[RMDB]
RNA sequence: GGGAACGACUCGAGUAGAGUCGAAAAGAUAUGGAUAUCGACAUGUCCCGAGUGUCGGAAACGACACCGAGGACAACAGCGAGUAUCCUAAGUCAAACCCGCAAGAAUCUUCGGAUUCUUGCGGGAACCUUUGUGCUAACUUCGGUUAGCACAAAGGAAAAGAAACAACAACAACAAC
Reactivity to DMS in 0.01 (KOAc 150mM, MgCl2 10mM, bicine 150mM(pH8.5), 24C), signal-to-noise 1, nucleotides 027 to 126: g000a020u090a300u010g000g000a010u000a030u000c020g010a080c100a200u010g010u000c000c010c000g040a120g040u000g010u000c000g010g000a080a040a200c010g050a010c010a010c010c010g020a090g010g010a090c000a000a060c250a140g010c000g010a050g010u050a010u000c000c000u000a160a190g000u000c030a060a140a200c000c010c000g010c000a010a000g000a010a000u000c000u020u010c220g000g000a010u000u000c000u000u000g000c020g030g000g010a010a030
Reactivity to 2A3 in 0.01 (KOAc 150mM, MgCl2 10mM, bicine 150mM(pH8.5), 24C), signal-to-noise 1, nucleotides 027 to 126: g050a010u140a050u220g010g000a010u010a040u040c000g090a150c110a130u060g000u030c030c000c000g050a270g020u000g010u000c030g010g050a030a070a070c000g000a000c000a000c000c060g090a200g150g040a010c010a030a010c050a040g110c000g030a010g010u050a020u050c000c010u020a160a020g060u040c070a000a130a100c020c000c000g000c020a000a020g000a030a010u070c030u180u300c300g030g030a010u010u030c000u000u000g040c030g000g010g010a010a000
Chemical mapping of a 177-nucleotide RNA with DMS and 2A3. For DMS the reverse transcriptase was MarathonRT. The 2A3 profile rests on 1,313 reads. Conditions: 150 mM KOAc, 10 mM MgCl2 and 150 mM bicine (pH 8.5), 24 C.